[RMDB]
The record gives the reactivity of an RNA of 207 nucleotides to 2A3. For 2A3 the reverse transcriptase was SuperScript II with manganese. Values are in units of 0.01, from 0 to 300, in steps of 10. Reactivities are given for positions 27 through 156.
RNA sequence: GGGAACGACUCGAGUAGAGUCGAAAAUUCGCUCCCUAGCUUCCGCUCGUAAGACGGGGAUCAAGCGGAGUCAAACCUAAACGAGAUCGUGUGGACGCUUCGGCUUGGAGAUCGAAACACUAAAUUGAAUCAAGCUAGUUUAUUCUUCGCGUGUCUGGGAAUAAAGACGGUUCGCCGUCUUUAUUCCAAAAGAAACAACAACAACAAC
Reactivity to 2A3 in 0.01 (KOAc 150mM, MgCl2 10mM, bicine 150mM(pH8.5), 24C), signal-to-noise 1, nucleotides 027 to 156: u070u030c020g020c010u020c010c000c000u010a090g020c030u030u040c010c150g030c020u020c010g020u020a030a030g000a160c000g010g010g010g000a030u130c280a110a000g000c000g060g000a040g060u100c050a080a080a130c010c050u140a080a060a000c010g020a020g010a030u110c030g010u020g000u000g020g030a000c020g010c000u030u040c030g070g000c010u030u060g020g020a040g010a010u040c010g030a020a090a000c020a020c060u070a040a090a170u130u270g020a000a000u040c030a000a000g040c000u040a070g020u060u080u110a150u140u070c030u040u050c070g020c040g000u060g070u030c120u110g050